[RMDB]
RNA sequence: GGGAACGACUCGAGUAGAGUCGAAAACGCCAAUCGCUGACAGCAGAUUUUGGAUUCCCUAAGCGAGGGAUCUAUUUAGAAAGUAUACACCCGAAUUUAAUGUUAGCCAUAUGCAUAAUGGACCAUCCACCUCUUAUUGGCUUGAGGGCAUCCUGGAGCUCAUUUAGGCUUUCGAGCCUAAAUGAGCAAAAGAAACAACAACAACAAC
Reactivity to 2A3 in 0.01 (KOAc 150mM, MgCl2 10mM, bicine 150mM(pH8.5), 24C), signal-to-noise 1, nucleotides 027 to 156: c040g070c030c000a010a000u100c050g010c030u060g040a000c030a000g100c000a060g010a080u020u110u100u160g010g010a000u200u240c010c000c000u060a190a050g200c060g110a090g000g000g050a030u020c000u000a110u260u300u180a000g110a000a080a000g010u090a050u000a050c090a030c000c000c000g040a060a080u140u170u220a190a030u140g080u030u100a000g010c000c000a000u110a040u190g070c030a110u300a220a070u230g100g000a030c010c010a000u080c010c000a010c060c000u090c060u150u050a040u030u100g070g000c000u010u080g010a030g010g000g070c000a030u000c030c100u030g000g040a030
Structure probing data (2A3) for a 207-nucleotide construct. The RNA was probed in 150 mM KOAc, 10 mM MgCl2 and 150 mM bicine (pH 8.5) at 24 C. Source: RMDB library OK3TST, as collected in RNAgym.